An RNA of 177 nucleotides, treated with DMS and 2A3 and read out base by base. The 2A3 profile rests on 1,670 reads. The DMS profile rests on 1,859 reads. The RNA was probed in 150 mM KOAc, 10 mM MgCl2 and 150 mM bicine (pH 8.5) at 24 C.

[RMDB]
RNA sequence: GGGAACGACUCGAGUAGAGUCGAAAACUAGCAGCUAUGCGCCCUCAUGGCUGCCACUAAGCGGGACGCGUGUGUCACCCAAAGCGGUCACUUGCCAGGCGAUCGGUUCCACGCCUCGCCAUGGAUCAAUAUCGCCUGCUUUCGAGCAGGCGAUAUUAAAAGAAACAACAACAACAAC
Reactivity to DMS in 0.01 (KOAc 150mM, MgCl2 10mM, bicine 150mM(pH8.5), 24C), signal-to-noise 1, nucleotides 027 to 126: c070u010a090g000c030a030g010c010u000a030u000g000c000g000c000c000c000u030c010a010u000g050g000c000u010g000c000c230a040c070u030a130a190g000c040g000g020g000a080c110g000c000g000u050g000u000g000u060c010a050c010c000c020a040a110a050g000c030g000g030u000c020a120c060u000u000g000c040c040a040g010g000c000g000a030u020c160g040g020u080u000c090c000a060c030g000c080c020u000c020g020c000c000a050u050g000g000a180u060c200
Reactivity to 2A3 in 0.01 (KOAc 150mM, MgCl2 10mM, bicine 150mM(pH8.5), 24C), signal-to-noise 3, nucleotides 027 to 126: c060u030a010g040c030a000g000c010u010a000u050g020c030g120c030c000c000u010c000a010u010g010g010c000u030g000c000c000a090c060u170a070a080g050c050g000g020g050a060c040g020c010g020u080g000u010g040u110c040a080c000c010c000a050a050a000g020c030g020g020u000c050a040c120u030u070g010c020c020a030g000g050c000g020a040u100c060g030g020u050u050c040c040a090c050g010c000c000u000c050g020c000c000a120u120g010g020a050u080c040